[RMDB]
RNA sequence: GGGAACGACUCGAGUAGAGUCGAAAAGGUAGAAAGUUAUCCGAACUUACUACGCUGGGCAAAUGCUAUUUAUAAUCGCCCAGCAGUGCAAAAAGGCUUACAAGCAGAAUAUCAGCCUAUUCGCUAAGGUCUUCAAUUCAUUCGUGAAUUGAAGACCAAAAGAAACAACAACAACAAC
Reactivity to DMS in 0.01 (KOAc 150mM, MgCl2 10mM, bicine 150mM(pH8.5), 24C), signal-to-noise 1, nucleotides 027 to 126: g010g030u000a000g040a220a020a010g000u000u020a120u030c180c080g030a100a040c000u010u010a130c040u000a020c040g030c000u000g000g020g000c010a010a070a060u000g010c080u000a150u010u010u000a120u020a080a100u000c150g000c000c000c000a030g030c000a090g000u000g010c080a090a050a160a040a120g000g000c080u010u010a040c220a100a070g050c100a060g030a030a100u010a010u050c170a170g020c080c070u000a110u020u000c030g040c090u000a070a150
Reactivity to 2A3 in 0.01 (KOAc 150mM, MgCl2 10mM, bicine 150mM(pH8.5), 24C), signal-to-noise 1, nucleotides 027 to 126: g180g040u030a050g050a130a010a030g040u000u080a090u130c070c030g020a010a000c030u000u030a040c000u030a020c010g000c010u020g010g000g000c000a120a000a000u140g020c080u150a150u190u220u050a150u070a040a070u070c060g000c000c000c000a000g000c000a000g020u050g060c010a000a080a000a040a000g050g060c020u070u120a120c030a080a060g050c050a040g140a200a050u120a050u150c120a010g010c000c010u020a100u010u040c000g040c030u000a030a030